[RMDB]
RNA sequence: GGGAACGACUCGAGUAGAGUCGAAAACAUCAUAACUCUGAAGCGCUGUGGUAAUACGACGUCCAAGUGGUGAUGCAGGAAGUUUUGAUAUCCAACCAGUCUGGCAUCCAAGUUGUGACGCCACCGCAGCAACAUUACUUUCUGCCCCACCCACAUGGCCUUUAGAGGGUUUCGACCCUCUAAAGGCAAAAGAAACAACAACAACAAC
Reactivity to 2A3 in 0.01 (KOAc 150mM, MgCl2 10mM, bicine 150mM(pH8.5), 24C), signal-to-noise 1, nucleotides 027 to 156: c040a060u090c010a020u150a070a110c000u120c030u100g080a140a030g040c010g000c020u040g000u000g000g000u060a100a110u090a230c140g090a020c000g010u000c000c050a050a020g070u010g090g090u110g020a020u020g010c010a000g000g000a070a020g040u020u000u150u150g300a080u000a040u080c020c010a000a030c050c000a010g110u130c000u150g050g000c000a000u000c030c020a030a220g020u080u040g110u250g090a000c000g070c050c030a000c000c000g000c020a000g000c000a020a000c000a000u000u030a000c000u000u090u050c000u030g000c000c000c000c020a020c000c020c080a040c020a070u270g060